[RMDB]
RNA sequence: GGGAACGACUCGAGUAGAGUCGAAAAGAUGGGGAUUUAAUCCUCAGUCACCUGAUUAUGGGUACACAGAUAAUGUACGACGCCGAGAAAAACGCAGUACAUUCCUGCGACACCGGAGAGUCUGAAGAAUCGCUAUCGCAUUCGUGCGAUAGCGAUUAAAAGAAACAACAACAACAAC
Reactivity to 2A3 in 0.01 (KOAc 150mM, MgCl2 10mM, bicine 150mM(pH8.5), 24C), signal-to-noise 1, nucleotides 027 to 126: g050a070u000g000g000g000g000a000u000u000u180a250a050u160c020c020u000c000a000g070u000c000a250c000c000u000g050a030u060u070a020u210g050g000g000u100a040c160a000c050a110g160a210u150a070a200u100g000u000a000c080g020a110c070g000c130c000g000a000g110a300a000a000a000a000c060g140c000a000g000u020a100c000a160u040u040c000c000u000g000c000g120a170c000a000c080c000g130g000a150g000a000g080u150c100u100g160a130a050g230
Reactivity to DMS in 0.01 (KOAc 150mM, MgCl2 10mM, bicine 150mM(pH8.5), 24C), signal-to-noise 1, nucleotides 027 to 126: g000a020u000g010g000g060g040a070u010u010u000a120a130u000c000c000u000c020a000g000u000c000a080c000c000u060g050a200u030u110a070u000g000g000g010u000a220c270a140c000a120g000a190u130a010a080u050g000u070a000c170g000a130c000g060c010c000g000a150g010a030a130a140a090a060c050g000c060a030g020u000a140c070a200u010u020c180c020u000g000c020g000a030c050a120c000c010g020g000a040g000a110g020u000c040u000g010a000a190g000
The data come from the RNA Mapping Database (RMDB), library OK1LIB. The record gives the reactivity of an RNA of 177 nucleotides to 2A3 and DMS. The reactions ran in a buffer of 150 mM KOAc, 10 mM MgCl2 and 150 mM bicine (pH 8.5), at 24 C. Reactivities are given for positions 27 through 126. For 2A3, 345 sequencing reads were counted.